This 207-nucleotide RNA was probed chemically with 2A3. Conditions: 150 mM KOAc, 10 mM MgCl2 and 150 mM bicine (pH 8.5), 24 C.
[RMDB]
RNA sequence: GGGAACGACUCGAGUAGAGUCGAAAAAAGAACCAUCCGAACAUUACCAUUACGGCAAUGGCGGAGCUGGAAGAUAUCGACGGCGCAGGUACUAAAGCGGUGCUGGCAUACGAAAAAGAUCCAAUGAACAUGAGCAUUGAGAUCCCGGAACGCUUUAGCCGUGUAGAUUGUUCGCAAUCUACACGGCAAAAGAAACAACAACAACAAC
Reactivity to 2A3 in 0.01 (KOAc 150mM, MgCl2 10mM, bicine 150mM(pH8.5), 24C), signal-to-noise 1, nucleotides 027 to 156: a020a000g080a030a020c020c010a040u070c010c000g030a050a070c020a040u050u080a130c060c000a110u110u270a100c150g010g030c000a010a010u010g030g000c000g050g000a050g000c000u050g050g000a020a000g020a100u090a050u080c120g020a080c020g040g000c050g000c020a000g030g040u070a050c040u160a050a080a020g000c050g030g050u100g030c020u000g000g000c030a070u170a110c110g040a030a040a050a000a040g050a000u000c000c000a040a030u020g020a090a070c010a160u120g010a100g110c040a000u000u110g000a140g000a190u050c000c010c010g000g050a040a020c090g010c040u020u040u020a000